[RMDB]
RNA sequence: GGGAACGACUCGAGUAGAGUCGAAAACGCGGGAUUUACAGAGACGGCGCAGAAGCGUCUCUGAUCUGCGCCACCGCGGAAAGCAGAACGAGCUGCCACUCGAAGUAUGACUUCGGUCAUGCGAAAAGGGAUGGACGGACUUCGGUCCGUCUAUCCCAAAAGAAACAACAACAACAAC
Reactivity to 2A3 in 0.01 (KOAc 150mM, MgCl2 10mM, bicine 150mM(pH8.5), 24C), signal-to-noise 2, nucleotides 027 to 126: c010g000c030g010g000g060a090u050u100u080a110c060a020g090a020g020a010c020g010g040c000g000c020a000g030a100a030g110c020g150u060c000u000c000u100g020a010u000c000u020g000c000g030c000c000a020c000c000g000c000g000g030a050a020a000g030c000a000g000a070a040c000g000a010g020c020u040g060c050c020a000c000u040c000g010a070a000g000u000a050u010g030a000c000u010u010c080g040g000u000c000a000u000g000c000g030a000a000a030a090
Reactivity to DMS in 0.01 (KOAc 150mM, MgCl2 10mM, bicine 150mM(pH8.5), 24C), signal-to-noise 2, nucleotides 027 to 126: c000g000c000g020g000g020a060u020u030u020a160c130a050g000a090g000a080c050g040g010c000g050c070a080g000a020a100g010c140g000u020c070u010c000u010g000a050u000c030u000g000c000g010c030c000a190c000c030g000c010g000g010a050a110a070g030c070a080g020a070a090c090g000a060g000c010u010g000c080c010a080c060u000c000g000a170a030g010u000a020u000g000a010c000u020u030c100g010g010u000c020a000u000g020c010g000a080a020a170a090